[RMDB]
RNA sequence: GGGAACGACUCGAGUAGAGUCGAAAAGUUCGGCCAGGUUCCGGCUGCCUGGCGGCGAACGAAUUCGUGUCGCAAAUCUAAAAGACAUGGGUUAACGGAAGGUCAAGUUUAAGCGCACCACGAAGGAUCAAGGGAUCCGGUUCGCUGGGUCCCUUGAAAAAGAAACAACAACAACAAC
Reactivity to 2A3 in 0.01 (KOAc 150mM, MgCl2 10mM, bicine 150mM(pH8.5), 24C), signal-to-noise 4, nucleotides 027 to 126: g000u010u000c000g020g000c000c000a010g000g000u030u060c020c000g010g000c010u010g000c000c000u000g010g000c000g020g150c000g010a010a000c000g000a000a010u030u010c010g000u010g030u020c010g010c050a020a040a080u040c020u180a050a010a000a020g010a010c010a010u030g010g010g020u010u030a040a000c010g010g040a060a000g010g010u020c020a010a050g010u020u010u090a040a000g010c000g000c000a010c000c000a010c020g010a030a020g030g010a050
Reactivity to DMS in 0.01 (KOAc 150mM, MgCl2 10mM, bicine 150mM(pH8.5), 24C), signal-to-noise 9, nucleotides 027 to 126: g010u000u000c000g000g000c000c000a010g010g010u000u020c030c020g010g010c010u000g000c010c000u010g000g000c010g000g020c010g000a010a010c010g010a060a060u010u000c010g020u000g000u000c000g020c140a070a080a070u060c160u030a070a090a130a120g000a020c020a020u010g010g000g010u000u010a080a120c100g000g000a080a020g000g010u000c040a060a080g010u010u010u020a070a110g010c040g000c080a050c040c030a050c060g000a080a070g010g000a180
Structure probing data (2A3 and DMS) for a 177-nucleotide construct. Source: RMDB library OK1LIB, as collected in RNAgym. For 2A3, 11,585 sequencing reads were counted. The DMS profile rests on 58,020 reads. The reactions ran in a buffer of 150 mM KOAc, 10 mM MgCl2 and 150 mM bicine (pH 8.5), at 24 C.